[RMDB]
RNA sequence: GGGAACGACUCGAGUAGAGUCGAAAAGAUAUGGACGUUUCCUGGCCGAAGAACGCUCUCGGAAACGAGAGCGGGAGGAACUACCAGGUAGCGUCCUAAGUCAAAGAGCAAAGUUCGCUUUGCUCAAGUCAUUCAAUUCGUUCGCGAAUUGAAUGACAAAAGAAACAACAACAACAAC
Reactivity to DMS in 0.01 (KOAc 150mM, MgCl2 10mM, bicine 150mM(pH8.5), 24C), signal-to-noise 2, nucleotides 027 to 126: g010a020u000a250u000g010g000a020c000g020u000u000u000c000c010u000g000g020c020c090g030a070a070g020a280a250c000g010c000u000c000u000c000g010g000a110a100a070c000g000a000g000a030g010c000g000g000g000a070g000g010a070a110c090u010a260c010c000a010g000g030u010a030g010c000g000u010c000c000u000a000a080g000u000c030a070a080a150g000a030g020c000a000a010a030g010u000u000c180g000c000u000u000u000g020c000u000c010a040a010
Reactivity to 2A3 in 0.01 (KOAc 150mM, MgCl2 10mM, bicine 150mM(pH8.5), 24C), signal-to-noise 1, nucleotides 027 to 126: g020a000u030a020u080g010g000a000c000g000u020u030u000c000c000u010g080g000c040c160g170a290a090g010a020a000c030g020c010u000c000u000c010g010g000a000a050a000c000g000a020g000a000g020c000g000g020g000a010g010g010a140a160c190u150a090c190c000a000g040g030u010a010g000c000g000u000c000c000u010a030a000g000u040c010a110a030a100g030a000g000c020a030a010a000g010u060u190c280g050c160u060u010u010g000c020u010c000a000a000